RNA sequence: GGGAACGACUCGAGUAGAGUCGAAAAGGAUGCUACGUAGUUAUAUUGACAGCUACCUCAUGUGGAGUUACACAUUGUCAAUCGAAAUGCGAUUGUAACUCCAGAUCGCGUUUCGACAUCUAUAUCGCUACUAGAUAGUAUUCGUACUGUCUAGUAGAAAAGAAACAACAACAACAAC
Reactivity to 2A3 in 0.01 (KOAc 150mM, MgCl2 10mM, bicine 150mM(pH8.5), 24C), signal-to-noise 9, nucleotides 027 to 126: g040g010a050u090g030c050u070a070c100g060u050a020g020u130u060a190u050a060u240u120g060a030c030a030g010c040u060a070c010c010u060c030a030u060g040u050g080g000a020g010u020u040a020c020a010c010a040u040u100g060u110c040a060a080u060c050g040a030a020a030u030g000c000g010a010u000u040g040u020a030a020c010u010c020c010a000g000a000u010c000g000c010g030u000u010u010c010g010a010c020a080u020c050u050a080u020a060u180c070g010
Reactivity to DMS in 0.01 (KOAc 150mM, MgCl2 10mM, bicine 150mM(pH8.5), 24C), signal-to-noise 9, nucleotides 027 to 126: g010g010a070u000g010c090u010a090c180g010u000a050g010u000u010a100u010a110u010u000g010a060c090a040g010c070u000a210c040c060u000c080a050u000g010u000g000g000a050g000u000u000a030c020a030c150a030u000u000g000u000c050a030a050u000c120g010a020a040a030u000g010c010g000a010u000u000g010u000a020a040c020u000c020c110a190g000a010u000c030g010c030g010u000u000u000c000g010a100c180a050u000c050u000a070u000a090u010c110g010
The record gives the reactivity of an RNA of 177 nucleotides to 2A3 and DMS. It was measured as part of the RMDB library OK2TRN. The 2A3 profile rests on 151,733 reads. Values are in units of 0.01, from 0 to 300, in steps of 10.